This 177-nucleotide RNA was probed chemically with DMS. Source: RMDB library OK1LIB, as collected in RNAgym.

[RMDB]
RNA sequence: GGGAACGACUCGAGUAGAGUCGAAAAACUCUAGACGGCCUUGAGAUAUUUCAGCCUGGAAAUGAGUGUAUGGGGUGUAUCAUGCAGGAAUCUCGAUAACGUUACGAAGCAUUACAGGUUGUGUGCCGAUUUUAGGCGGAUUCGUCCGCCUAAAAUCAAAAGAAACAACAACAACAAC
Reactivity to DMS in 0.01 (KOAc 150mM, MgCl2 10mM, bicine 150mM(pH8.5), 24C), signal-to-noise 1, nucleotides 027 to 126: a120c010u000c010u010a070g030a140c050g000g000c000c010u000u030g000a020g020a100u020a070u050u000u000c110a030g000c010c000u020g050g000a070a010a050u040g000a020g000u020g020u000a060u000g000g010g030g000u000g000u020a050u040c030a120u000g000c110a060g010g030a010a140u040c070u000c050g000a080u000a000a090c180g000u000u050a040c120g000a090a090g000c000a030u000u000a080c070a010g000g000u000u000g000u000g020u040g030c050c120